The record gives the reactivity of an RNA of 177 nucleotides to 2A3 and DMS. Reactivities are given for positions 27 through 126. The data come from the RNA Mapping Database (RMDB), libraries RFM100 and RFMREP.

[RMDB]
RNA sequence: GGGAACGACUCGAGUAGAGUCGAAAAGGGCCGAAAGGGAAGCGGGUUAAAAUUCCUGCACCACUCUAAAGGAUAUUAGGGCAACCGAUCGUAAUCCGGGACAUCAAUUGGUGGUCGAGGAAGAGUUACAUAAGGAUGUUUUCGAACAUCCUUAUGUAAAAGAAACAACAACAACAAC
Reactivity to 2A3 in 0.01 (KOAc 150mM, MgCl2 10mM, bicine 150mM(pH8.5), 24C), signal-to-noise 9, nucleotides 027 to 126: g010g000g010c050c020g090a080a020a020g040g010g010a060a030g020c060g060g000g010u050u070a040a060a080a120u110u030c000c000u030g030c020a030c000c010a030c010u130c020u110a110a120a030g040g000a030u050a100u130u160a050g000g000g000c020a050a040c010c020g040a070u090c060g040u090a070a040u010c010c020g020g030g030a040c040a080u100c040a040a220u060u070g020g000u010g020g030u060c070g040a020g020g010a030a040g020a020g090u020u020
Reactivity to DMS in 0.01 (KOAc 150mM, MgCl2 10mM, bicine 150mM(pH8.5), 24C), signal-to-noise 7, nucleotides 027 to 126: g000g010g010c030c080g000a050a080a080g000g000g000a070a070g020c040g000g010g010u010u030a040a060a130a170u010u010c000c010u010g010c060a080c050c030a080c030u010c100u010a060a090a110g010g000a070u010a070u010u010a150g010g010g000c170a080a130c050c040g010a090u020c130g010u020a080a070u020c050c030g000g000g010a090c140a060u010c110a080a100u010u010g000g020u000g010g000u000c060g010a100g000g010a060a030g000a100g000u000u000